About this RNA:
This 177-nucleotide RNA was probed chemically with 2A3 and DMS. The reactions ran in a buffer of 150 mM KOAc, 10 mM MgCl2 and 150 mM bicine (pH 8.5), at 24 C.
RNA sequence: GGGAACGACUCGAGUAGAGUCGAAAAGCUGGUCCGGAUUGGCCCCAGCGAACACUUGACGAACGGAUAGUCCCGUCUUGUGGAUUAGGACGUUCUAGGUCCGGUCUGUCCCCUAGUUCGUCCGAAACCCACGUGCUGAUUUCGAUCAGCACGUGGGAAAAGAAACAACAACAACAAC
Reactivity to 2A3 in 0.01 (KOAc 150mM, MgCl2 10mM, bicine 150mM(pH8.5), 24C), signal-to-noise 3, nucleotides 027 to 126: g010c000u010g000g020u060c000c000g120g160a170u050u300g160g000c000c050c020c000a010g000c010g010a000a000c000a010c020u000u010g030a000c000g000a110a000c030g060g020a110u100a180g090u230c030c040c000g020u030c040u000u000g040u030g000g090a050u010u160a070g010g000a000c000g000u000u000c000u000a000g000g010u020c100c080g000g000u080c190u180g300u300c000c030c000c000u000a030g020u000u050c000g000u000c010c000g030a020a000a000
Reactivity to DMS in 0.01 (KOAc 150mM, MgCl2 10mM, bicine 150mM(pH8.5), 24C), signal-to-noise 2, nucleotides 027 to 126: g010c020u000g000g040u010c050c050g000g000a070u020u040g020g000c040c150c000c010a020g020c100g030a030a100c000a040c000u000u000g000a050c000g020a190a030c010g030g010a200u080a210g000u010c200c040c070g010u040c020u000u100g000u000g000g030a060u010u070a080g010g000a000c000g000u000u000c000u000a000g000g040u000c120c160g020g020u060c190u040g000u030c060c040c000c040u000a020g000u000u000c000g000u010c000c000g010a020a110a080
Description: The data come from the RNA Mapping Database (RMDB), library OK1LIB. The DMS profile rests on 1,778 reads. For DMS the reverse transcriptase was MarathonRT. Values are in units of 0.01, from 0 to 300, in steps of 10.